[RMDB]
RNA sequence: GGGAACGACUCGAGUAGAGUCGAAAAGCCAGUGAGGAUUCCACACAGCUGGGCAGUCUGAGCUUGGCCGCACCCUCUGCAGCCCUGCUGGCAUCUCAGGAGAUGGGCCCGAGAGAGGGAGGGGCUGGCCCGCUUAGGAAUUCGUUCCUAAGCGGGCAAAAGAAACAACAACAACAAC
Reactivity to DMS in 0.01 (KOAc 150mM, MgCl2 10mM, bicine 150mM(pH8.5), 24C), signal-to-noise 1, nucleotides 027 to 126: g010c060c020a020g010u000g000a260g040g000a070u000u000c070c030a050c070a140c170a140g000c000u000g020g050g030c140a090g000u000c050u000g030a280g020c020u000u000g070g000c000c030g000c070a100c030c000c000u000c050u000g020c050a120g000c020c000c030u000g000c010u000g010g000c130a170u000c020u000c020a050g020g000a120g000a100u000g000g010g030c010c020c060g000a130g010a030g000a070g000g000g000a140g010g010g020g030c020u000g020